[RMDB]
Background:
Conditions: 150 mM KOAc, 10 mM MgCl2 and 150 mM bicine (pH 8.5), 24 C. This 207-nucleotide RNA was probed chemically with 2A3. Reactivities are given for positions 27 through 156.

RNA sequence: GGGAACGACUCGAGUAGAGUCGAAAACAGAACUGGAUGGGCCGUGUGCUUAACCAGGACAAGAUCUCCUUCUCUCCAAAGUUGUUGCCAACUCAUGAUUCUCCUAACCUGUGCUUGGAGAGACGUGCUACCAUAUAGGUGUUCGCACCUAUAUGAAGGUAUAAUUGGUCUUCGGACCAAUUAUACCAAAAGAAACAACAACAACAAC
Reactivity to 2A3 in 0.01 (KOAc 150mM, MgCl2 10mM, bicine 150mM(pH8.5), 24C), signal-to-noise 1, nucleotides 027 to 156: c170a020g030a040a010c010u080g020g060a050u010g040g040g000c040c030g250u130g160u300g100c020u030u080a080a040c000c000a000g070g140a050c090a090a020g060a170u040c030u040c080c060u130u030c010u020c000u000c080c070a030a080a070g000u020u020g000u040u000g130c070c020a020a030c040u020c040a020u110g010a240u180u000c080u050c010c040u070a040a070c030c080u120g060u150g170c070u030u050g020g000a050g010a000g000a000c020g020u070g010c000u100a130c010c000a000u010a000u000a040g010g030u000g040u060u000c180g070c060a010c000c010u010a000u000a000u000g020a070a020